[RMDB]
The record gives the reactivity of an RNA of 177 nucleotides to 2A3 and DMS.
RNA sequence: GGGAACGACUCGAGUAGAGUCGAAAAGAUAUGGAUCGUGUGUAGACAUGCUGAUGGGUCGGAAACGACCCACCAGCAACAGCUACCACGAUCCUAAGUCAAACAUAAGGCGUUCGCGCCUUAUGAAGCUUGAUACAAUCUUCGGAUUGUAUCAAGCAAAAGAAACAACAACAACAAC
Reactivity to 2A3 in 0.01 (KOAc 150mM, MgCl2 10mM, bicine 150mM(pH8.5), 24C), signal-to-noise 1, nucleotides 027 to 126: g000a000u030a000u060g020g000a000u010c000g010u050g030u060g030u040a010g000a060c170a230u300g000c000u000g000a030u000g030g000g010u010c020g000g000a010a000a020c010g000a000c000c010c020a000c000c010a000g010c000a010a050c110a010g000c000u010a000c020c000a000c000g010a000u000c000c000u000a000a010g000u020c000a060a070a050c000a020u000a000a000g000g000c000g100u090u190c300g020c040g040c140c000u000u000a010u010g030a020a020
Reactivity to DMS in 0.01 (KOAc 150mM, MgCl2 10mM, bicine 150mM(pH8.5), 24C), signal-to-noise 2, nucleotides 027 to 126: g010a040u000a060u000g000g000a000u010c000g030u030g010u020g010u000a000g000a030c130a120u010g020c000u010g010a030u000g000g000g030u000c000g040g010a010a010a020c000g020a020c000c000c000a000c010c000a010g030c000a050a020c110a090g010c000u000a010c000c010a010c000g010a000u010c010c000u000a000a070g000u010c020a130a160a300c000a000u010a000a010g010g020c000g040u000u000c300g040c000g050c000c000u000u000a000u000g000a130a130
DMS adducts were read by reverse transcription with MarathonRT. The RNA was probed in 150 mM KOAc, 10 mM MgCl2 and 150 mM bicine (pH 8.5) at 24 C. DMS (dimethyl sulfate) methylates the pairing face of unpaired adenines and cytosines.